Conditions: 150 mM KOAc, 10 mM MgCl2 and 150 mM bicine (pH 8.5), 24 C. Chemical mapping of a 170-nucleotide RNA with 2A3 and DMS. DMS adducts were read by reverse transcription with MarathonRT. 2A3 is a SHAPE reagent: it acylates the 2'-hydroxyl of flexible nucleotides of all four kinds. For 2A3 the reverse transcriptase was SuperScript II with manganese. Source: RMDB library 15KLIB, as collected in RNAgym.

RNA sequence: GGGAACGACUCGAGUAGAGUCGAAAAGCCUGAUUUUGUAGCAUUUAAUGUCUUUCAGGGCAUUGAAACGGCUGUUGGCCAUUAUGUUCAUGCUCGCCUGAAGGGUGGUCUUAUUUUAAAGUUUGACAUGGAUAUGUGUUCGCACAUAUCAAAAGAAACAACAACAACAAC
Reactivity to 2A3 in 0.01 (KOAc 150mM, MgCl2 10mM, bicine 150mM(pH8.5), 24C), signal-to-noise 9, nucleotides 027 to 129: g030c000c000u060g110a180u030u090u100u160g140u110a010g020c020a030u020u030u120a110a050u130g020u030c020u020u190u070c070a060g040g010g000c000a010u010u100g030a040a030a030c040g030g000c020u060g150u220u180g100g000c010c020a030u130u130a110u300g090u030u020c010a010u030g000c040u050c090g060c030c020u030g020a020a010g020g010g000u040g030g010u020c030u050u080a180u070u140u030u130a110a120a060g030u030u050u070g050a060c040a100u120g070
Reactivity to DMS in 0.01 (KOAc 150mM, MgCl2 10mM, bicine 150mM(pH8.5), 24C), signal-to-noise 9, nucleotides 027 to 129: g000c070c010u030g010a140u050u000u000u000g020u010a070g030c070a100u030u020u030a030a060u020g000u000c010u010u050u030c130a080g040g030g010c000a040u000u030g030a000a030a040c110g020g040c030u030g040u020u040g000g000c020c010a100u020u020a100u040g000u040u030c030a050u020g020c070u010c110g040c050c020u040g010a040a060g000g020g030u000g010g000u000c040u000u000a050u040u050u020u040a040a090a080g010u010u010u000g000a080c080a080u040g030